[RMDB]
RNA sequence: GGGAACGACUCGAGUAGAGUCGAAAAGGCGCGACGGUGACGGCCGUGUGCGUCGUCGAGCACAAGCCGCGGCUCGUCGAUGUCGACACCGCGUACGUCGAGCCGCAGGACGACGACGGCUCGGCGAACGUGAGGGCUCAUUCGUGAGCCCUCACGUAAAAGAAACAACAACAACAAC
Reactivity to 2A3 in 0.01 (KOAc 150mM, MgCl2 10mM, bicine 150mM(pH8.5), 24C), signal-to-noise 2, nucleotides 027 to 126: g100g000c060g000c010g070a060c040g060g120u200g040a030c030g090g010c000c020g030u060g030u180g050c000g010u010c010g020u010c010g060a120g120c080a100c050a190a040g040c010c000g000c010g040g010c060u070c300g030u010c020g050a090u120g060u070c010g010a020c040a000c040c000g050c030g060u060a100c000g000u020c000g020a000g000c000c010g020c050a050g040g050a060c060g010a020c000g030a090c010g000g000c000u000c000g000g000c000g000a010
Reactivity to DMS in 0.01 (KOAc 150mM, MgCl2 10mM, bicine 150mM(pH8.5), 24C), signal-to-noise 2, nucleotides 027 to 126: g050g020c060g010c010g040a040c020g000g020u030g000a090c110g000g000c000c010g000u000g010u010g020c040g000u010c020g000u000c010g010a160g020c160a140c280a100a110g010c010c030g000c010g000g060c000u010c040g030u000c000g050a130u000g010u000c030g020a100c140a150c110c040g030c050g010u000a040c020g000u000c000g010a040g020c000c000g010c060a070g040g010a080c060g010a050c020g000a100c010g000g000c030u020c020g000g000c000g000a010
Chemical mapping of a 177-nucleotide RNA with 2A3 and DMS. For 2A3 the reverse transcriptase was SuperScript II with manganese. The RNA was probed in 150 mM KOAc, 10 mM MgCl2 and 150 mM bicine (pH 8.5) at 24 C.